[RMDB]
RNA sequence: GGGAACGACUCGAGUAGAGUCGAAAACGCAGAGGGUUCUGAUAACAAAGAACCUAGAUAGCCGCAUCGGUAUUAUCGGAUGUAGUCGGUGAGCCGGAAUGCCUGCAUCGUAAGCCUAUAAGUAAAUUUAAGUGUAAUCACUUCGGUGAUUACACAAGGGUAUAGUCUAGUUCGCUAGACUAUACCCAAAAGAAACAACAACAACAAC
Reactivity to 2A3 in 0.01 (KOAc 150mM, MgCl2 10mM, bicine 150mM(pH8.5), 24C), signal-to-noise 5, nucleotides 027 to 156: c050g030c050a030g070a100g070g030g000u000u000c030u030g070a100u110a210a050c020a060a150a000g000a000a000c000c000u020a020g010a040u040a010g060c030c030g020c020a040u050c040g040g000u040a140u300u030a030u110c020g020g020a030u110g060u150a060g130u170c030g000g000u040g000a000g020c000c000g000g040a070a000u050g020c010c000u020g000c000a030u020c020g060u040a030a040g030c000c010u130a110u030a190a080g090u110a040a120a220u130u220u120a210a030g000u000g000u000a000a000u000c000a000c000u000u030c080g030g010u000g000a000u000u010a000c000a000c000a000a020
Reactivity to DMS in 0.01 (KOAc 150mM, MgCl2 10mM, bicine 150mM(pH8.5), 24C), signal-to-noise 2, nucleotides 027 to 156: c070g080c050a120g010a200g030g030g030u000u000c020u000g000a160u020a130a240c300a150a200a020g000a020a010c010c000u000a080g030a130u000a090g000c080c110g030c030a050u000c010g010g000u020a080u000u000a100u000c000g000g000a130u000g040u000a110g020u000c020g030g040u000g000a100g010c090c050g050g000a050a060u000g010c030c060u010g000c030a070u000c010g000u010a030a110g040c040c030u000a120u010a040a140g010u000a050a030a130u010u000u020a100a190g030u000g000u000a000a000u000c000a000c000u000u000c300g060g030u000g030a010u000u000a010c010a000c010a000a130
Notes:
Conditions: 150 mM KOAc, 10 mM MgCl2 and 150 mM bicine (pH 8.5), 24 C. This 207-nucleotide RNA was probed chemically with 2A3 and DMS. Values cover nucleotides 27 to 156.